Conditions: 150 mM KOAc, 10 mM MgCl2 and 150 mM bicine (pH 8.5), 24 C. Chemical mapping of a 177-nucleotide RNA with 2A3 and DMS. For DMS the reverse transcriptase was MarathonRT.
[RMDB]
RNA sequence: GGGAACGACUCGAGUAGAGUCGAAAAGCCGGUGCCAUCCAGGCGCGCCGCGUCCUCGAGAUCGGCACACUCGGUGGCUUCAGCACCAUUUGGCUGGCGCGUGGCGCGGGCCCACAGGGACGGGUGGGCCGUGCUCCAGAUUCGUCUGGAGCACGGCAAAAGAAACAACAACAACAAC
Reactivity to 2A3 in 0.01 (KOAc 150mM, MgCl2 10mM, bicine 150mM(pH8.5), 24C), signal-to-noise 3, nucleotides 027 to 126: g010c000c000g070g000u070g000c050c030a070u000c020c020a040g080g050c050g010c010g070c030c070g030c010g090u130c000c010u060c100g110a140g010a150u100c070g010g000c000a020c000a020c100u020c020g040g040u100g010g000c000u080u100c040a020g020c020a030c050c040a070u100u030u290g070g000c030u030g030g040c030g000c030g050u110g030g000c010g000c020g000g010g020c020c020c000a070c020a020g120g000g080a070c020g020g010g020u080g020g060
Reactivity to DMS in 0.01 (KOAc 150mM, MgCl2 10mM, bicine 150mM(pH8.5), 24C), signal-to-noise 1, nucleotides 027 to 126: g010c000c000g070g040u020g040c010c040a000u000c060c120a080g000g020c160g000c020g040c090c080g000c080g000u090c010c020u000c060g040a170g000a140u000c090g000g010c020a040c040a050c050u000c040g000g050u000g000g000c110u000u000c010a090g000c130a150c130c040a030u020u000u040g010g000c050u000g010g020c200g000c000g000u000g020g020c050g000c000g030g000g010c040c010c050a000c140a020g030g040g000a220c070g010g000g000u000g000g000